RNA sequence: GGGAACGACUCGAGUAGAGUCGAAAAGAUAUGGAUGCCUAGCUCAUCGAUCAGCGUGGGAUUGUAAACUGGUCGGAAACGACCAGGAUGACGGUCCACGCUGGGAGAGCUAAGGCAUCCUAAGUCACUGAGUAUAGAACUUCGGUUCUAUACUCAGAAAAGAAACAACAACAACAAC
Reactivity to DMS in 0.01 (KOAc 150mM, MgCl2 10mM, bicine 150mM(pH8.5), 24C), signal-to-noise 4, nucleotides 027 to 126: g000a040u010a300u000g000g010a000u000g030c000c000u000a050g020c000u010c010a300u000c250g010a080u010c020a010g000c000g050u000g030g010g010a070u000u000g030u000a000a300a300c010u000g010g020u010c000g000g010a050a080a170c010g010a020c000c010a010g000g000a030u020g010a160c300g010g000u000c000c000a020c020g010c010u010g000g010g010a050g020a010g000c000u000a020a040g010g010c000a000u000c000c000u000a000a090g000u000c050a300
Reactivity to 2A3 in 0.01 (KOAc 150mM, MgCl2 10mM, bicine 150mM(pH8.5), 24C), signal-to-noise 4, nucleotides 027 to 126: g020a020u090a050u180g030g010a010u000g000c010c000u020a020g000c010u020c030a300u300c180g150a280u090c020a000g020c000g000u070g090g300g060a050u060u150g000u020a010a030a020c010u010g040g000u030c020g010g030a100a120a040c010g000a000c040c010a010g010g000a060u300g020a010c010g010g000u020c000c020a000c020g000c010u000g000g020g000a050g010a000g010c030u050a000a050g020g000c000a000u000c000c000u010a020a000g010u020c000a010